[RMDB]
RNA sequence: GGGAACGACUCGAGUAGAGUCGAAAAGAAAAUAGCGUAAUGGACAUUGAGAAUGUACGCUAAGUGUGUGUUGUAUAAAUAACGUCCAAUUGAACACACACACAGUUGGACGUAAUGUCCAAAAAAACUACCCGUUAAUGUUCGCAUUAACGGGUAGAAAAGAAACAACAACAACAAC
Reactivity to DMS in 0.01 (KOAc 150mM, MgCl2 10mM, bicine 150mM(pH8.5), 24C), signal-to-noise 2, nucleotides 027 to 126: g010a080a060a100a110u000a010g020c010g000u000a050a040u000g010g010a030c010a070u010u000g010a120g000a080a100u020g010u000a010c050g020c010u010a030a140g000u000g000u000g010u000g020u000u000g020u010a110u010a070a000a050u000a050a060c020g000u000c000c010a020a080u000u000g010a070a060c000a000c010a000c000a020c010a030c090a050g000u010u020g000g000a020c010g020u010a080a050u000g010u000c010c000a020a000a050a050a050a010a100
Reactivity to 2A3 in 0.01 (KOAc 150mM, MgCl2 10mM, bicine 150mM(pH8.5), 24C), signal-to-noise 1, nucleotides 027 to 126: g100a000a130a000a000u180a000g020c020g000u020a000a050u080g030g000a020c030a030u050u080g030a030g020a070a090u120g020u090a020c010g000c000u040a070a080g020u010g010u000g000u000g020u030u050g080u040a140u100a300a120a030u070a060a010c020g010u000c000c010a000a010u030u070g080a040a000c010a010c000a000c000a000c000a000c020a040g070u040u040g000g000a010c000g000u000a010a070u050g000u000c000c020a060a020a030a010a020a000a040